[RMDB]
RNA sequence: GGGAACGACUCGAGUAGAGUCGAAAAUGCGCAUGCGCAACGGUGCCGAACACGCGACCUGCAUGCGACCCUCUUGGGUUUUGCACUUAAAUUAGCCAAGGUCGUUUGGUUAACGCAUCUGAAGGCCUCAUUAUGCUCACUUCGGUGAGCAUAAUGAAAAAGAAACAACAACAACAAC
Reactivity to 2A3 in 0.01 (KOAc 150mM, MgCl2 10mM, bicine 150mM(pH8.5), 24C), signal-to-noise 7, nucleotides 027 to 126: u150g020c030g020c050a070u150g020c030g000c050a060a050c090g010g000u030g010c050c020g120a130a010c080a010c080g030c010g030a030c000c010u020g000c030a030u070g000c000g010a010c010c030c000u140c080u140u300g060g000g010u070u060u150u200g010c020a020c020u100u100a030a090a200u160u090a050g020c050c050a070a010g040g010u030c020g040u020u050u080g040g000u040u040a040a010c050g000c010a010u010c060u100g060a080a040g070g010c000c000
Reactivity to DMS in 0.01 (KOAc 150mM, MgCl2 10mM, bicine 150mM(pH8.5), 24C), signal-to-noise 4, nucleotides 027 to 126: u010g020c000g050c010a060u000g010c000g010c070a100a120c110g000g020u010g010c030c080g000a110a110c050a020c110g020c020g020a020c000c000u000g020c050a150u020g000c050g020a020c020c000c000u000c220u060u060g020g000g010u000u000u010u020g080c010a090c240u000u020a080a180a140u020u010a060g020c110c170a130a070g010g010u010c020g020u000u000u000g010g000u020u020a070a110c300g000c000a010u000c030u030g010a150a090g000g010c020c040